[RMDB]
RNA sequence: GGGAACGACUCGAGUAGAGUCGAAAAUUACCUCCCUUCGGGGAGGUAAACUGAACGCUGCAAGCGGCAGCGCGCUCGCUUGCGCACACACGGACAAUAAAAGCAGUAUGCACUUCGGUGCAUACAACAUUUGAUCCCUUUUCGAAGGGAUCAAAUGAAAAGAAACAACAACAACAAC
Reactivity to 2A3 in 0.01 (KOAc 150mM, MgCl2 10mM, bicine 150mM(pH8.5), 24C), signal-to-noise 4, nucleotides 027 to 126: u030u010a010c000c000u010c010c000c000u010u040c220g030g000g010g010a010g000g000u000a000a010a000c010u010g070a080a010c090g000c100u200g000c020a020a010g000c000g050g020c020a080g300c060g030c050g000c120u140c030g000c000u020u010g000c010g000c010a020c000a000c000a020c070g120g080a050c060a130a130u160a160a150a020a010g050c050a020g010u000a000u000g000c000a010c010u040u090c190g110g000u000g000c000a000u000a000c000a000a000
Reactivity to DMS in 0.01 (KOAc 150mM, MgCl2 10mM, bicine 150mM(pH8.5), 24C), signal-to-noise 4, nucleotides 027 to 126: u010u010a000c000c000u000c000c000c000u000u020c170g040g010g010g020a010g000g010u000a000a020a060c070u010g020a120a110c150g010c020u010g020c010a030a010g010c030g000g020c030a170g030c170g030c230g000c020u000c040g000c010u010u000g010c020g030c040a090c140a090c120a090c090g000g000a090c140a060a070u010a060a080a110a130g020c120a140g020u000a000u000g000c010a000c000u010u020c140g010g010u010g010c000a010u000a000c000a080a180
The record gives the reactivity of an RNA of 177 nucleotides to 2A3 and DMS. It was measured as part of the RMDB library M2PK50. DMS adducts were read by reverse transcription with MarathonRT.